[RMDB]
RNA sequence: GGGAACGACUCGAGUAGAGUCGAAAAAGGUGAAACAAUAGCACAUGGUAAAGUUGGGCAGGGGAUAUCUGCAUGGAGUAAGACCUUCUGUGCUCUGUUUGGCCCAUGGUUUCGCGCUAUUGAGAAACCCUAUUAGAAAAUUCGUUUUCUAAUAGGGAAAAGAAACAACAACAACAAC
Reactivity to 2A3 in 0.01 (KOAc 150mM, MgCl2 10mM, bicine 150mM(pH8.5), 24C), signal-to-noise 5, nucleotides 027 to 126: a000g160g000u120g050a090a050a010c000a010a030u010a020g000c010a020c010a110u040g030g020u160a190a140a130g050u060u040g020g020g000c010a000g010g030g000g030a040u050a060u210c050u080g020c020a040u130g050g010a060g050u140a210a050g100a100c010c000u040u000c010u030g050u010g030c000u000c010u020g080u020u040u040g050g000c010c000c010a010u030g080g010u030u100u190c050g000c020g010c060u030a040u060u070g030a070g120a070a060a010
Reactivity to DMS in 0.01 (KOAc 150mM, MgCl2 10mM, bicine 150mM(pH8.5), 24C), signal-to-noise 8, nucleotides 027 to 126: a090g010g020u000g010a120a110a140c020a020a030u000a010g010c000a100c030a060u010g010g010u010a080a050a100g020u000u000g010g010g020c010a070g010g000g000g000a070u010a040u010c050u000g010c040a070u010g010g020a050g010u010a100a130g010a110c150c040u000u010c050u000g010u000g010c000u000c060u000g000u000u000u000g010g010c080c010c020a030u000g010g000u000u000u010c120g010c110g000c020u000a030u000u000g000a150g000a140a120a120
Chemical mapping of a 177-nucleotide RNA with 2A3 and DMS. The reactions ran in a buffer of 150 mM KOAc, 10 mM MgCl2 and 150 mM bicine (pH 8.5), at 24 C. For 2A3, 7,917 sequencing reads were counted.